[RMDB]
RNA sequence: GGGAACGACUCGAGUAGAGUCGAAAAUGGUUUUGGUUUGAGAACCGAUGAAGGACGUGCCAAGCUGCGAUAUGCCUUGGGGAGGUGCAUGGAGCCAUUGAUCCAAGGAUUUCCGAAUGGGACUUCCCCCAAGGGGUACGUUCGCGUACCCCUUGGGAAAAGAAACAACAACAACAAC
Reactivity to DMS in 0.01 (KOAc 150mM, MgCl2 10mM, bicine 150mM(pH8.5), 24C), signal-to-noise 2, nucleotides 027 to 126: u040g010g000u000u000u000u050g000g000u060u030u000g000a090g000a070a080c000c000g030a150u020g000a190a140g040g010a070c050g000u010g000c000c020a030a150g030c040u000g010c070g000a060u000a010u000g000c000c000u050u020g010g010g000g000a060g030g050u000g030c010a220u020g000g010a150g030c080c000a260u000u040g030a120u050c050c010a010a020g000g010a000u000u010u000c000c010g000a120a090u000g000g000g000a200c100u000u000c030c010
Reactivity to 2A3 in 0.01 (KOAc 150mM, MgCl2 10mM, bicine 150mM(pH8.5), 24C), signal-to-noise 2, nucleotides 027 to 126: u120g000g040u070u010u030u080g130g070u070u050u210g120a080g000a060a010c010c040g050a060u060g050a060a060g000g000a000c010g000u010g060c000c020a030a000g020c030u010g000c000g010a050u010a000u030g030c020c010u060u040g000g000g000g000a020g000g000u000g000c020a030u290g070g030a130g000c010c000a080u170u060g020a020u000c030c000a000a000g000g000a010u000u000u000c010c000g000a030a040u060g070g000g030a010c000u040u040c020c000